Chemical mapping of a 177-nucleotide RNA with 2A3 and DMS. For DMS the reverse transcriptase was MarathonRT. The 2A3 profile rests on 2,023 reads. Reactivities are given for positions 27 through 126.
RNA sequence: GGGAACGACUCGAGUAGAGUCGAAAACCACCGCAAUUCGUUGCGGUGGGAAGGUGCAAUUCGCUGUCUGCACCACAGACGGCCAUUCCGUCAAAGCGAAAACUGGAGGGUCAUUCGUGACCCUCAAGAAACAGACCGUUUUCGAACGGUCUGUUUCAAAAGAAACAACAACAACAAC
Reactivity to 2A3 in 0.01 (KOAc 150mM, MgCl2 10mM, bicine 150mM(pH8.5), 24C), signal-to-noise 2, nucleotides 027 to 126: c000c000a000c010c000g000c000a040a000u060u030c190g060u090u010g000c000g000g020u000g010g000g000a000a110g000g000u000g030c030a070a200u060u030c030g020c050u040g040u110c060u050g000c000a010c020c000a010c000a040g030a020c000g020g000c070c090a140u240u130c010c060g020u000c040a050a030a000g000c010g030a020a020a020a090c130u140g100g010a000g000g020g000u000c000a020u050u080c150g140u050g010a000c000c010c000u000c000a010a010
Reactivity to DMS in 0.01 (KOAc 150mM, MgCl2 10mM, bicine 150mM(pH8.5), 24C), signal-to-noise 2, nucleotides 027 to 126: c010c000a040c000c000g010c000a000a040u000u040c140g030u000u010g000c000g000g000u020g000g040g000a020a040g010g000u020g030c010a000a140u020u000c030g070c000u010g010u000c080u000g010c000a020c010c070a040c090a150g010a000c020g000g020c260c180a110u000u010c000c000g010u000c020a080a300a020g030c010g030a040a040a070a120c110u010g000g020a020g000g000g000u000c000a030u000u000c230g040u000g000a010c000c000c000u000c000a020a050